[RMDB]
An RNA of 177 nucleotides, treated with DMS and read out base by base. The DMS profile rests on 636 reads. The reactions ran in a buffer of 150 mM KOAc, 10 mM MgCl2 and 150 mM bicine (pH 8.5), at 24 C. DMS adducts were read by reverse transcription with MarathonRT.
RNA sequence: GGGAACGACUCGAGUAGAGUCGAAAAGAUAUGGAACACUACCCACCUCCUAAAUAGCAAUGAUGGUUAAUACUCUCGGAAACGAGAGUAUUAACUUGAGCUAUAUAAGGAGAGGUGUUCCUAAGUCCGUUGUAUCUCGGUUCGCCGAGAUACAACGAAAAGAAACAACAACAACAAC
Reactivity to DMS in 0.01 (KOAc 150mM, MgCl2 10mM, bicine 150mM(pH8.5), 24C), signal-to-noise 1, nucleotides 027 to 126: g000a200u050a150u010g020g030a020a060c010a000c000u000a080c050c050c030a300c160c000u000c000c000u010a150a040a010u000a000g000c000a250a060u020g020a110u000g000g000u000u020a000a000u000a000c000u000c000u000c020g000g020a060a030a160c000g000a010g000a000g000u000a000u000u000a000a000c000u010u010g000a300g000c010u000a000u000a140u020a120a110g000g000a020g010a070g020g000u000g000u000u000c000c020u020a110a160g000u020c110